Chemical mapping of a 177-nucleotide RNA with DMS and 2A3. DMS adducts were read by reverse transcription with MarathonRT.

RNA sequence: GGGAACGACUCGAGUAGAGUCGAAAACUUUCCAGGGUGUGCUGAGAAUCGUGGUUCAGUGUGUGUUGAACACGGCAGAUUACCAUUACGUGGGCUAGUUGUGUGCCGUGGUCGCUGGAUCGGAAAAGGUUGUCCCGUGUUUCGGCGCGGGACGACCAAAAGAAACAACAACAACAAC
Reactivity to DMS in 0.01 (KOAc 150mM, MgCl2 10mM, bicine 150mM(pH8.5), 24C), signal-to-noise 6, nucleotides 027 to 126: c180u010u010u010c010c010a090g000g010g020u010g020u010g000c030u000g000a100g010a080a070u020c060g030u020g000g010u000u000c030a040g000u010g010u010g020u020g020u010u010g000a120a070c020a010c010g000g000c020a040g000a070u020u010a100c040c040a050u020u040a110c210g010u010g010g010g010c170u010a090g010u010u000g010u020g010u000g000c010c010g000u000g010g010u000c030g000c020u000g000g010a050u000c050g000g010a050a070a100a090
Reactivity to 2A3 in 0.01 (KOAc 150mM, MgCl2 10mM, bicine 150mM(pH8.5), 24C), signal-to-noise 8, nucleotides 027 to 126: c010u030u070u030c010c020a030g060g030g020u140g020u050g040c020u050g030a040g050a190a080u120c050g080u100g040g000u020u020c010a030g000u010g000u020g010u010g030u100u090g040a040a000c000a000c000g000g000c000a010g010a100u060u110a070c010c020a040u130u100a110c230g060u180g000g040g010c060u050a050g070u050u080g070u030g060u040g060c000c000g010u010g010g030u030c000g000c010u000g000g010a020u020c010g040g010a070a100a040a040
The RNA was probed in 150 mM KOAc, 10 mM MgCl2 and 150 mM bicine (pH 8.5) at 24 C. Source: RMDB library OK1LIB, as collected in RNAgym.